[RMDB]
RNA sequence: GGGAACGACUCGAGUAGAGUCGAAAACACUUAAGCAGGCUUCAGUAUCACCUGCAGGGCUUGUGCAAGCCAGACUGCUGGGCCCCGACCCAGCGCUACCAGUCUGCAGGCCUGGGAUGGGACUCGGGAGGAUCGGUAAAUUCGUUUACCGAUCCUCAAAAGAAACAACAACAACAAC
Reactivity to 2A3 in 0.01 (KOAc 150mM, MgCl2 10mM, bicine 150mM(pH8.5), 24C), signal-to-noise 1, nucleotides 027 to 126: c040a020c030u170u160a030a030g000c040a000g100g000c040u170u140c110a070g080u120a110u280c030a060c050c020u000g030c010a010g050g040g000c010u100u070g130u110g170c100a030a010g000c030c020a010g060a020c100u130g000c000u020g030g000g000c080c000c000c020g100a130c030c000c010a000g030c010g010c000u020a050c020c030a040g070u070c080u060g070c040a000g010g040c020c020u000g030g010g010a050u100g070g000g000a050c030u030c050g070g030
Reactivity to DMS in 0.01 (KOAc 150mM, MgCl2 10mM, bicine 150mM(pH8.5), 24C), signal-to-noise 2, nucleotides 027 to 126: c070a100c190u010u000a060a110g000c010a040g000g000c110u010u040c130a100g000u010a090u010c120a100c030c030u010g010c000a130g000g000g000c010u000u000g000u010g000c120a060a060g030c080c060a050g000a090c070u000g030c010u000g010g030g000c050c060c040c060g000a090c000c010c000a010g010c090g020c030u000a040c170c120a080g000u010c070u000g010c080a150g020g010c040c000u000g010g000g010a130u000g010g000g010a100c090u000c060g000g010
This 177-nucleotide RNA was probed chemically with 2A3 and DMS. High 2A3 reactivity points to a flexible backbone, as in loops and unpaired stretches. Source: RMDB library OK2TST, as collected in RNAgym. The reactions ran in a buffer of 150 mM KOAc, 10 mM MgCl2 and 150 mM bicine (pH 8.5), at 24 C.